Chemical mapping of a 207-nucleotide RNA with 2A3.
The reactions ran in a buffer of 150 mM KOAc, 10 mM MgCl2 and 150 mM bicine (pH 8.5), at 24 C.
2A3 is a SHAPE reagent: it acylates the 2'-hydroxyl of flexible nucleotides of all four kinds.
The 2A3 profile rests on 3,801 reads.

[RMDB]
RNA sequence: GGGAACGACUCGAGUAGAGUCGAAAACGCUGGGUGCCGUAACAUCCACCCAUCCAUUGAGGCGACGAUCGUGCUGAAGCGCGCACGGCACGGGAGCCUCAAUGGAUGGCGUGGUGGGCACCUGUGCUGAAGCGCGCACGGCAACCGAAAGGUGCGAGCUCUACGUGAAGUUCGCUUCACGUAGAGCAAAAGAAACAACAACAACAAC
Reactivity to 2A3 in 0.01 (KOAc 150mM, MgCl2 10mM, bicine 150mM(pH8.5), 24C), signal-to-noise 2, nucleotides 027 to 156: c040g000c020u020g020g000g010u010g020c030c000g100u130a110a060c050a220u100c010c000a000c000c000c000a000u010c000c000a000u000u010g000a010g010g030c020g040a200c060g020a250u030c000g030u000g020c010u030g030a170a070g010c010g000c010g000c010a020c000g000g010c000a000c000g030g010g010a010g000c000c000u020c010a000a000u000g000g000a010u000g010g000c080g000u000g000g010u020g000g030g000c000a000c010c000u000g000u000g000c000u050g020a140a040g000c010g010c020g000c010a010c030g010g010c000a010a050c000c020g020a060a030a030g000g000u010g010c000g010a050